[RMDB]
RNA sequence: GGGAACGACUCGAGUAGAGUCGAAAACAUUAGGAAAAACAGCUAAUGCAUGCUGGGCUUAAUACCUAGGUGAUGGGUUGAUAGGUGCAGCAAACCACCAUGGUACACGUUUACCUAUGAAACAAAUCUGCACAUCCUGCACAUGUACCCUAGAAUAGCCCAUCCUGAUGUUCGCAUCAGGAUGGGCAAAAGAAACAACAACAACAAC
Reactivity to 2A3 in 0.01 (KOAc 150mM, MgCl2 10mM, bicine 150mM(pH8.5), 24C), signal-to-noise 1, nucleotides 027 to 156: c070a010u150u200a090g020g030a030a060a080a150a030c030a000g020c000u000a040a110u210g060c040a020u090g180c000u040g000g000g050c000u150u000a180a000u010a110c040c090u100a140g000g020u120g040a050u110g000g000g040u000u000g110a030u050a240g060g000u050g000c000a000g000c010a120a000a080c000c000a000c010c010a030u030g020g020u130a080c250a020c070g060u140u130u000a000c000c000u000a030u130g040a050a120a000c030a000a050a050u060c000u040g000c000a080c000a080u180c000c010u080g000c060a080c000a140u000g030u190a090c090c000c000u050a050g000a150a090u090a020